[RMDB]
RNA sequence: GGGAACGACUCGAGUAGAGUCGAAAACGACGCCCAGCAAGUGGCGGCCGACGCAGCUGCUAAGAAACACCACACCGAGGACGUGAUGGUACGCCAGAUCACUAAGCUUUCUGCAGAACACGGUCACGUUAUCUUGACCCUUCGGGGUCAAGAUAACAAAAGAAACAACAACAACAAC
Reactivity to 2A3 in 0.01 (KOAc 150mM, MgCl2 10mM, bicine 150mM(pH8.5), 24C), signal-to-noise 1, nucleotides 027 to 126: c020g050a010c070g020c020c010c000a010g080c050a060a030g040u020g110g020c000g000g010c050c000g030a030c040g000c040a020g060c010u080g000c000u100a130a000g000a060a040a010c020a030c040c000a030c000a000c030c020g020a120g070g100a030c020g000u000g020a180u010g040g010u030a040c040g100c070c010a030g030a120u050c000a050c080u020a070a030g010c020u040u110u110c010u040g070c030a000g000a050a000c050a000c060g090g000u040c030a000c120
Reactivity to DMS in 0.01 (KOAc 150mM, MgCl2 10mM, bicine 150mM(pH8.5), 24C), signal-to-noise 1, nucleotides 027 to 126: c120g020a130c160g000c020c010c050a130g000c120a130a180g020u020g000g000c000g000g010c030c020g020a120c190g000c090a050g020c090u010g010c000u020a020a100g000a120a080a110c000a100c050c020a000c130a050c080c060g000a030g010g020a060c090g010u000g040a040u000g010g000u000a050c120g000c050c040a140g010a050u010c050a060c120u030a050a070g000c080u000u000u010c050u000g000c020a020g000a040a080c090a040c030g020g030u010c010a040c160